[RMDB]
RNA sequence: GGGAACGACUCGAGUAGAGUCGAAAACAACUGUUAUAUUGCCACUGCAUUGUUAACACUCCAACAAAUAGAGUUGAAGUUUAAUCCACCUGCUCUACAAAGGGCUGGUGAAGCUGCUAACUUUUGUAAGGGCUGUACUUCGGUACAGCCAAAAGAAACAACAACAACAAC
Reactivity to DMS in 0.01 (KOAc 150mM, MgCl2 10mM, bicine 150mM(pH8.5), 24C), signal-to-noise 2, nucleotides 027 to 129: c030a100a130c070u020g000u050u000a100u000a190u060u100g030c000c250a130c150u050g020c010a020u010u010g000u030u030a080a000c100a030c070u000c000c090a000a000c130a040a140a130u000a090g070a070g200u000u000g030a170a000g040u040u010u000a090a050u060c180c000a090c000c040u060g020c030u000c040u010a070c300a080a160a070g040g000g000c000u010g000g020u050g010a030a020g070c040u110g090c000u000a030a020c000u000u000u000u000g080u060a000a000g000
Reactivity to 2A3 in 0.01 (KOAc 150mM, MgCl2 10mM, bicine 150mM(pH8.5), 24C), signal-to-noise 4, nucleotides 027 to 129: c010a000a000c010u010g040u150u020a070u010a020u100u120g040c020c030a140c100u100g030c000a040u060u000g040u080u030a020a020c040a000c050u030c010c010a020a000c020a070a210a110u260a030g070a010g030u000u020g040a010a000g020u020u030u200a050a030u060c030c000a000c020c000u000g000c030u010c000u090a100c060a000a150a100g000g000g000c000u000g000g010u020g010a050a020g010c020u060g000c010u020a030a020c010u010u000u020u020g060u020a020a060g010